[RMDB]
RNA sequence: GGGAACGACUCGAGUAGAGUCGAAAAGAUAUGGAGAAUCAAGAUCGUUGAUCCGUAACAUCACUCGGAAACGAGUGUGGGGGAGAUCGAAAUUCUCCUAAGUCAAACAGAGGCUUCGGCCUCUGAAUCCUAGUAUUCACUUCGGUGAAUACUAGGAAAAAGAAACAACAACAACAAC
Reactivity to DMS in 0.01 (KOAc 150mM, MgCl2 10mM, bicine 150mM(pH8.5), 24C), signal-to-noise 3, nucleotides 027 to 126: g000a040u000a300u010g010g010a050g020a010a010u000c030a040a300g000a010u000c000g010u000u010g010a020u020c010c010g000u000a060a190c150a030u030c010a000c010u000c010g000g000a130a060a120c010g010a030g040u000g020u010g000g000g000g010g000a020g000a000u000c010g020a090a120a020u000u000c000u000c000c000u000a060a040g000u000c010a150a120a200c010a000g000a020g010g020c000u000u000c230g020g010c000c000u010c000u000g000a070a140
Reactivity to 2A3 in 0.01 (KOAc 150mM, MgCl2 10mM, bicine 150mM(pH8.5), 24C), signal-to-noise 2, nucleotides 027 to 126: g020a000u040a040u120g010g010a000g000a000a000u030c050a060a070g000a020u010c010g080u240u030g010a010u000c060c030g040u140a090a110c050a200u240c010a020c010u010c000g030g020a070a050a030c010g000a000g000u010g000u040g010g000g000g020g000a050g010a010u000c000g000a050a000a000u010u000c010u000c000c000u000a000a000g010u000c010a030a020a070c000a010g000a000g000g020c010u070u090c300g240g000c000c000u000c000u000g000a010a010
About this RNA: Conditions: 150 mM KOAc, 10 mM MgCl2 and 150 mM bicine (pH 8.5), 24 C. An RNA of 177 nucleotides, treated with DMS and 2A3 and read out base by base. Source: RMDB library TTRDEL, as collected in RNAgym.